An RNA of 207 nucleotides, treated with 2A3 and DMS and read out base by base. 2A3 adducts were read by reverse transcription with SuperScript II with manganese.
RNA sequence: GGGAACGACUCGAGUAGAGUCGAAAAUCCACUUUGAAUCUAGUCACUAAAUAAACACAAUUAGCUACUGUGUGUAAUAGUGAGUGUUGAUAACACAAAAUAAUAGUAUAGUUUUGGAAGAUUAUACGCGCCCUUGCUCCGUUCGCGGAGCAAGGAACUAAGAACGAGGGUUCGCCCUCGUUCUUAGAAAAGAAACAACAACAACAAC
Reactivity to 2A3 in 0.01 (KOAc 150mM, MgCl2 10mM, bicine 150mM(pH8.5), 24C), signal-to-noise 3, nucleotides 027 to 156: u020c010c010a050c070u150u110u240g150a100a040u070c110u120a070g120u030c010a000c000u000a010a050a090u050a020a060a000c000a000c010a010a120u120u120a080g070c080u190a070c050u020g000u000g010u000g000u000a010a040u020a050g000u010g030a020g020u040g040u040u070g050a120u280a300a010c030a010c030a040a170a030a020u280a140a060u080a120g020u020a010u000a000g020u020u020u110u110g140g020a110a040g000a070u030u020a000u020a030c010g030c000g070c040c000c000u000u000g000c000u000c020c000g030u020u030c170g020c030g140g000a000g000c000a000a000g000g000a010a000
Reactivity to DMS in 0.01 (KOAc 150mM, MgCl2 10mM, bicine 150mM(pH8.5), 24C), signal-to-noise 2, nucleotides 027 to 156: u010c010c010a180c140u000u000u000g020a110a070u020c040u000a060g000u010c010a040c010u000a020a030a060u000a160a180a010c000a000c000a010a080u010u020a220g000c140u000a060c060u020g090u000g020u030g010u010a150a300u000a020g020u010g010a090g030u000g030u000u010g000a080u000a070a140c050a200c100a050a000a050a090u000a110a300u000a120g000u000a030u000a050g010u020u000u010u010g010g010a130a120g000a080u000u010a010u010a020c000g010c110g000c190c010c000u000u010g000c040u010c000c020g020u000u010c290g050c090g040g000a020g010c000a000a000g000g010a020a010
The 2A3 profile rests on 1,522 reads. It was measured as part of the RMDB library M2RFPK. The RNA was probed in 150 mM KOAc, 10 mM MgCl2 and 150 mM bicine (pH 8.5) at 24 C. In probing experiments dimethyl sulfate is read out at A N1 and C N3, which are open when not base-paired.